[RMDB]
RNA sequence: GGGAACGACUCGAGUAGAGUCGAAAAUUGGUGACGCCGAGUGGAGUAAAGACGGAGAGUCUCCGCUAGUCGGAAAGACUCCGCAUCCUCCGGCUGACCCUCCUUCAGCUCGCCGCUAGUCGAGCGGGAAUCCGGUAAAGUUCGCUUUACCGGAUUCAAAAGAAACAACAACAACAAC
Reactivity to DMS in 0.01 (KOAc 150mM, MgCl2 10mM, bicine 150mM(pH8.5), 24C), signal-to-noise 2, nucleotides 027 to 126: u010u010g000g020u000g010a300c300g000c020c000g000a230g000u010g000g000a010g050u000a020a030a080g020a120c030g000g000a010g000a050g030u000c060u010c010c000g020c000u010a070g010u010c000g000g010a050a070a100g000a050c010u000c010c010g050c010a300u000c040c000u000c000c000g020g050c010u000g000a260c300c030c030u010c010c000u000u010c130a120g020c030u000c010g010c060c060g020c150u040a160g000u000c020g010a060g010c000g000g020

Chemical mapping of a 177-nucleotide RNA with DMS. For DMS, 811 sequencing reads were counted. Values cover nucleotides 27 to 126.